[RMDB]
RNA sequence: GGGAACGACUCGAGUAGAGUCGAAAAUGCUCCCAUAUGAUGAAAUAUUUCGGAUGUAAAACAUUGUCAUUGUCGGAAAGCGCAAAAAAUAAUGUCGAGAUUUCCGUUGCCUUCCUUCUGAUUGGGAUAACGCAUUAUACUUCGGUAUAAUGCGUUAAAAAGAAACAACAACAACAAC
Reactivity to DMS in 0.01 (KOAc 150mM, MgCl2 10mM, bicine 150mM(pH8.5), 24C), signal-to-noise 7, nucleotides 027 to 126: u030g010c140u000c010c010c010a090u010a050u010g010a040u010g010a050a070a060u030a100u020u000u010c030g020g010a080u010g020u020a070a110a110a090c060a040u000u010g000u010c050a200u010u000g020u010c040g010g000a060a070a080g000c100g010c030a000a010a050a070a080a050u010a040a040u020g010u000c040g000a130g000a080u010u000u010c010c030g000u000u000g000c100c030u000u000c010c030u000u000c040u010g000a140u010u010g000g000g010a110
Reactivity to 2A3 in 0.01 (KOAc 150mM, MgCl2 10mM, bicine 150mM(pH8.5), 24C), signal-to-noise 9, nucleotides 027 to 126: u120g030c020u030c010c010c010a010u070a040u080g040a010u030g030a010a090a030u220a090u070u120u080c020g030g010a040u060g030u190a010a030a030a020c020a020u030u040g030u040c010a040u000u050g090u080c030g050g080a170a150a100g160c070g010c070a030a060a010a050a020a040u180a030a050u050g050u100c040g020a020g020a220u030u050u020c000c010g030u040u050g020c000c010u010u050c030c000u050u030c050u070g100a180u070u090g020g000g020a050
The record gives the reactivity of an RNA of 177 nucleotides to DMS and 2A3. 2A3 adducts were read by reverse transcription with SuperScript II with manganese.